[RMDB]
RNA sequence: GGGAACGACUCGAGUAGAGUCGAAAAUUGAAAUUGAACCGUCCUGUAAUCGAAAGAUAGGCAGAAGAUACGAAAUGUGUGACAGCAUGGGAAGUAAAGGCAGACCGUGGUUCCCUUGAGUAUCUUAAUUAGGGGGACGAGUUCGCUCGUCCCCCAAUCCCAUACGUAUGUUCGCAUACGUAUGGGAAAAAGAAACAACAACAACAAC
Reactivity to DMS in 0.01 (KOAc 150mM, MgCl2 10mM, bicine 150mM(pH8.5), 24C), signal-to-noise 2, nucleotides 027 to 156: u000u020g010a070a110a150u020u000g010a050a120c040c000g060u010c060c020u010g000u000a080a080u000c070g000a140a120a190g000a070u000a060g030g030c020a060g000a150a060g010a060u000a050c050g010a130a070a050u000g040u010g020u010g010a130c100a150g030c100a030u000g020g000g000a070a160g020u000a050a070a070g010g040c060a070g000a170c060c020g000u010g000g000u000u000c010c000c010u000u020g020a260g000u000a040u000c080u000u000a060a100u000u000a110g000g000g000g040g040a010c020g010a060g000u020u000c170g000c000u010c000g000u010c000c010c020c010c000a000a000
The data come from the RNA Mapping Database (RMDB), library M2RFPK. An RNA of 207 nucleotides, treated with DMS and read out base by base. The reactions ran in a buffer of 150 mM KOAc, 10 mM MgCl2 and 150 mM bicine (pH 8.5), at 24 C. For DMS the reverse transcriptase was MarathonRT.